[RMDB]
RNA sequence: GGGAACGACUCGAGUAGAGUCGAAAAAUCAGAGGGCGCUAUCAUGCAAACUAGGAGUGUCUGCUCAUGCACAGAACCAACUACCGAUAACUAACAGUGCAUGAAGGUUAGUUAUUCCAUAUUAAUUAAAACUCGUAAUUCUUCGGAAUUACGAGAAGCAGACUUCAUUGUUCGCAAUGAAGUCUGCAAAAGAAACAACAACAACAAC
Reactivity to 2A3 in 0.01 (KOAc 150mM, MgCl2 10mM, bicine 150mM(pH8.5), 24C), signal-to-noise 1, nucleotides 027 to 156: a000u170c090a040g030a050g090g000g090c000g010c110u070a090u240c110a110u240g060c060a090a080a020c130u120a090g060g030a020g030u040g030u030c050u040g000c010u000c020a000u010g000c040a020c000a010g110a070a030c040c010a000a080c030u140a030c010c090g030a000u000a000a000c000u000a000a000c010a020g010u020g040c000a010u020g030a030a080g030g000u030u010a000g030u000u000a000u060u080c010c010a020u070a030u270u200a050a130u190u090a000a090a210a050c000u000c000g000u000a000a000u000u010c000u010u030c090g110g000a000a000u020u020a010c000g000a000g000a000a000

Chemical mapping of a 207-nucleotide RNA with 2A3. For 2A3 the reverse transcriptase was SuperScript II with manganese.